RNA sequence: GGGAACGACUCGAGUAGAGUCGAAAAGUUUAGCACGCCUAGCCCCCACAUUAUUCAAGGGCCACUUGUGUUAGUAAGGAACAAGAAACGAUCAAAAAUAGGUGCGAUGGGCAUGAUCUCACAUAUGUGGAACUUUUAAAAGUCUAACUUGUAGAAGCACACUUCUUUUCUUCGGAAAAGAAGUGUGAAAAGAAACAACAACAACAAC
Reactivity to 2A3 in 0.01 (KOAc 150mM, MgCl2 10mM, bicine 150mM(pH8.5), 24C), signal-to-noise 2, nucleotides 027 to 156: g000u050u050u070a080g050c030a010c040g030c010c010u030a060g040c060c020c020c050c010a040c020a110u120u220a120u060u100c060a050a070g030g010g000c000c020a020c030u020u040g000u020g010u060u070a080g010u020a030a090g060g060a060a000c030a110a040g090a150a040a010c030g040a050u110c100a030a130a050a080a060u050a050g060g020u050g000c080g030a120u050g010g030g050c070a010u060g010a010u050c000u030c030a040c000a020u180a000u110g020u010g070g070a040a000c000u050u100u030u020a010a210a040a000g010u020c020u040a040a050c020u110u110g040u170a040g070a200a010g070
Reactivity to DMS in 0.01 (KOAc 150mM, MgCl2 10mM, bicine 150mM(pH8.5), 24C), signal-to-noise 2, nucleotides 027 to 156: g000u000u000u000a080g040c010a120c100g030c010c020u000a140g000c020c010c000c040c030a080c140a150u010u000a120u000u020c070a130a120g020g040g000c100c050a070c000u000u000g050u000g000u000u000a110g010u010a040a150g000g020a090a080c060a040a060g020a110a070a080c120g020a130u000c040a040a130a060a050a150u000a050g000g010u000g030c080g040a110u000g010g000g020c030a080u010g010a040u000c020u010c040a000c050a080u000a060u010g030u010g020g020a040a010c020u000u000u020u000a030a090a040a110g060u000c050u010a060a080c030u000u000g010u000a120g000a090a160g040